[RMDB]
Structure probing data (2A3) for a 177-nucleotide construct. Values cover nucleotides 27 to 126. The reactions ran in a buffer of 150 mM KOAc, 10 mM MgCl2 and 150 mM bicine (pH 8.5), at 24 C. The data come from the RNA Mapping Database (RMDB), library OK1LIB.
RNA sequence: GGGAACGACUCGAGUAGAGUCGAAAACGAAGACCUGAUUUCCGGCGACUUCCGUUCCAUUUUUCGUGGUCAGGGCAUAGAAUUCGAAGAGGUGCGGACCUAUCAGGUGGGCGACGAUAUCCGCUCGCCGGCGAAAAACCUUCGGGUUUUUCGCCGGAAAAGAAACAACAACAACAAC
Reactivity to 2A3 in 0.01 (KOAc 150mM, MgCl2 10mM, bicine 150mM(pH8.5), 24C), signal-to-noise 1, nucleotides 027 to 126: c040g040a080a030g090a060c000c000u000g010a020u060u000u090c000c000g050g000c000g010a010c000u080u030c010c000g000u110u080c070c090a150u140u090u000u010u080c000g080u000g000g060u050c000a030g000g050g000c010a050u090a070g100a120a050u160u080c040g040a090a100g020a020g210g000u060g040c020g000g160a090c000c000u140a090u120c010a000g120g000u060g000g010g000c000g000a080c060g030a020u040a060u190c040c000g000c020u050c080g010